Chemical mapping of a 207-nucleotide RNA with 2A3 and DMS. The RNA was probed in 150 mM KOAc, 10 mM MgCl2 and 150 mM bicine (pH 8.5) at 24 C. The DMS profile rests on 3,515 reads. High DMS reactivity at an A or C suggests that its Watson-Crick edge is free.

[RMDB]
RNA sequence: GGGAACGACUCGAGUAGAGUCGAAAAGCAUCCGACAUGGUGCUGGGAUGCGAAUAUCAGCACGUUACUCCUCGAGAACGCAUGGGAGGAGGAUCAUCCAUGCAAUGGCUUUUGCCUAUCGUACCAUAGAGUCGUCGGUACGUAAGAUGACGACCGACCAUAGGACCUGAUUCGUCAGGUCCUAUGGAAAAGAAACAACAACAACAAC
Reactivity to 2A3 in 0.01 (KOAc 150mM, MgCl2 10mM, bicine 150mM(pH8.5), 24C), signal-to-noise 5, nucleotides 027 to 156: g020c030a010u040c040c060g090a080c110a130u110g060g000u070g020c030u070g050g010g000a040u050g040c070g050a060a020u100a050u140c060a040g050c030a020c030g000u060u110a040c010u010c000c000u010c020g010a020g030a090a040c100g000c050a030u030g040g000g010a040g030g030a040g000g010a030u060c010a010u020c050c000a000u000g000c000a030a120u120g030g000c050u080u130u150u300g000c020c000u060a050u040c010g020u010a010c010c010a070u070a090g040a040g040u010c020g010u000c020g030g040u060a060c030g040u060a040a040g050a080u140g000a010c010g020a010c010c010g000a020
Reactivity to DMS in 0.01 (KOAc 150mM, MgCl2 10mM, bicine 150mM(pH8.5), 24C), signal-to-noise 2, nucleotides 027 to 156: g000c020a130u000c010c000g020a070c020a170u010g030g010u000g000c000u000g010g070g000a120u020g000c070g020a180a080u000a060u010c030a000g030c060a070c020g000u000u000a100c030u000c020c000u000c020g020a110g020a110a070c170g040c050a050u000g010g010g030a140g030g000a130g010g000a080u010c060a150u000c060c010a050u000g000c020a120a030u000g020g000c040u010u010u000u020g010c010c020u000a100u010c040g000u000a030c040c000a200u010a090g000a130g000u000c020g020u000c040g000g000u000a080c060g010u010a040a070g030a200u000g030a040c020g000a070c000c030g000a180